[RMDB]
Structure probing data (DMS and 2A3) for a 177-nucleotide construct.
RNA sequence: GGGAACGACUCGAGUAGAGUCGAAAAGAGGACGGACUACUGGCUGUCGCAGAGGCUGUAUCCGGUCUGCAAACACGACAGGGCUGGAAUGUCACCUGGAGUGUCCGGAGUAGGACGUCCGAAGAGAGGGAUCGAUCUGGUUCGCCAGGUCGAUCCCAAAAGAAACAACAACAACAAC
Reactivity to DMS in 0.01 (KOAc 150mM, MgCl2 10mM, bicine 150mM(pH8.5), 24C), signal-to-noise 2, nucleotides 027 to 126: g000a180g050g010a030c000g030g000a090c020u010a000c000u010g000g010c000u010g000u020c160g000c150a040g000a080g020g010c010u000g010u030a170u020c000c010g000g030u010c060u000g060c140a070a210a040c030a000c000g020a180c000a000g000g000g000c120u000g000g000a160a050u000g000u030c040a130c010c030u000g000g020a210g000u000g020u000c030c000g010g000a020g040u000a000g010g000a110c000g000u000c000c000g000a110a000g000a090g010a220
Reactivity to 2A3 in 0.01 (KOAc 150mM, MgCl2 10mM, bicine 150mM(pH8.5), 24C), signal-to-noise 3, nucleotides 027 to 126: g190a050g000g000a010c000g000g000a000c000u000a000c010u040g040g050c020u050g040u150c020g020c030a020g060a020g130g000c030u040g070u140a140u040c010c000g000g010u020c060u050g050c010a040a120a000c030a010c020g050a020c000a010g010g020g100c010u080g080g250a220a180u180g080u120c020a030c110c000u000g010g000a030g000u000g000u000c000c020g000g010a010g000u000a000g000g000a020c000g000u000c000c000g000a030a000g060a000g020a010

Values are in units of 0.01, from 0 to 300, in steps of 10.
Values cover nucleotides 27 to 126.